[RMDB]
RNA sequence: GGGAACGACUCGAGUAGAGUCGAAAAAGUCCGUAUACGUACGGACAUUGCCUGUUUUGGCACUAGCACAUUUUUGCUUUUUUAUAUAUACCUUGAGCAAUUAUGUGUAGUGCCAAUAUGGGACAAACGUCAUCGAGCCAUUCGUGGCUCGAUGACGAAAAGAAACAACAACAACAAC
Reactivity to 2A3 in 0.01 (KOAc 150mM, MgCl2 10mM, bicine 150mM(pH8.5), 24C), signal-to-noise 1, nucleotides 027 to 126: a000g000u000c000c000g000u000a000u020a000c300g010u010a000c000g000g000a000c000a000u000u120g020c000c000u000g000u000u000u000u000g000g010c020a000c000u050a190g170c000a000c030a000u000u000u000u000u020g000c000u030u100u080u010u160u030a180u000a010u030a060u180a200c050c050u190u140g050a050g000c000a000a000u000u000a000u000g000u000g000u010a000g000u000g010c000c020a000a000u000a000u000g000g010g030a050c020a020a200a010
About this RNA: The record gives the reactivity of an RNA of 177 nucleotides to 2A3. Source: RMDB library RFM100, as collected in RNAgym. Conditions: 150 mM KOAc, 10 mM MgCl2 and 150 mM bicine (pH 8.5), 24 C.